[RMDB]
RNA sequence: GGGAACGACUCGAGUAGAGUCGAAAAAUCCUCAGGUUCAUAAGCGUGAUGAUUGGGUGUUCAUGCUCGAUGCAUGACAUGUGCCUCCUUUGAACCUUGUUACGACCUUGGCACAUUACCCAUCUGAAAAAGACGUUCGCGUUCGCGCGAACGUCAAUCUAGUUUAAAGCUUCGGCUUUAAACUAGAAAAAGAAACAACAACAACAAC
Reactivity to 2A3 in 0.01 (KOAc 150mM, MgCl2 10mM, bicine 150mM(pH8.5), 24C), signal-to-noise 4, nucleotides 027 to 156: a000u010c010c000u000c020a000g020g000u010u000c010a020u070a300a050g040c110g150u120g080a080u020g010a030u130u230g030g000g000u050g040u060u040c010a000u010g010c020u070c170g170a080u300g000c000a000u000g000a000c000a030u010g000u000g010c000c000u040c000c010u010u020u010g010a010a010c000c000u000u080g070u020u130a120c100g070a110c070c060u050u070g020g010c000a000c000a020u020u160a030c000c000c000a000u000c020u040g080a070a060a030a060a060g010a000c000g010u000u000c000g000c010g020u040u050c160g010c000g000c040g130a000a000c000g000u000c000a000a000
Reactivity to DMS in 0.01 (KOAc 150mM, MgCl2 10mM, bicine 150mM(pH8.5), 24C), signal-to-noise 2, nucleotides 027 to 156: a080u020c000c010u000c010a040g010g010u000u000c010a020u010a040a070g000c130g040u000g020a120u000g000a080u000u000g010g010g070u020g020u000u020c020a000u020g000c010u010c180g030a200u000g030c010a030u000g000a050c300a210u010g000u000g030c000c010u000c120c020u000u000u000g000a010a020c010c030u010u000g030u020u000a130c200g010a120c120c070u000u000g030g010c010a020c010a130u000u000a060c010c000c000a080u000c040u010g000a140a080a080a130a200g010a040c000g030u000u000c000g000c020g000u010u000c300g060c030g080c000g010a000a020c000g010u010c000a000a040